[RMDB]
RNA sequence: GGGAACGACUCGAGUAGAGUCGAAAAGAUAUGGAUCACUGCAAGUUGCGUCCAGGUGUCGAUGAAACUCGUCGGAAACGACGAGUGGAGACACUAGGACGCAAUGAUGACCAGUGAUCCUAAGUCAGUAUUCGUUUAGGUUCGCCUAAACGAAUACAAAAGAAACAACAACAACAAC
Reactivity to 2A3 in 0.01 (KOAc 150mM, MgCl2 10mM, bicine 150mM(pH8.5), 24C), signal-to-noise 2, nucleotides 027 to 126: g040a030u100a030u170g010g000a000u000c010a020c000u030g000c040a140a300g010u000u000g010c010g000u000c000c030a070g080g000u000g010u000c060g160a300u030g020a010a030a020c010u000c000g000u000c000g000g080a100a100a080c010g010a010c000g010a000g000u000g020g000a000g000a000c010a000c000u020a090g010g010a000c010g010c000a000a000u000g000a010u020g040a020c050c020a010g000u000g010a010u000c000c000u010a090a020g050u000c080a020
Reactivity to DMS in 0.01 (KOAc 150mM, MgCl2 10mM, bicine 150mM(pH8.5), 24C), signal-to-noise 5, nucleotides 027 to 126: g010a040u000a300u020g000g010a020u000c000a010c000u000g010c030a070a090g000u000u000g010c000g010u000c000c000a300g010g010u010g000u010c000g000a130u010g010a180a160a040c000u000c000g000u000c000g010g000a170a090a180c010g000a020c000g000a020g020u000g000g000a050g000a010c000a000c000u000a080g000g000a020c000g020c010a000a000u000g020a070u020g000a160c300c000a020g000u000g000a010u000c000c000u000a010a110g010u000c070a140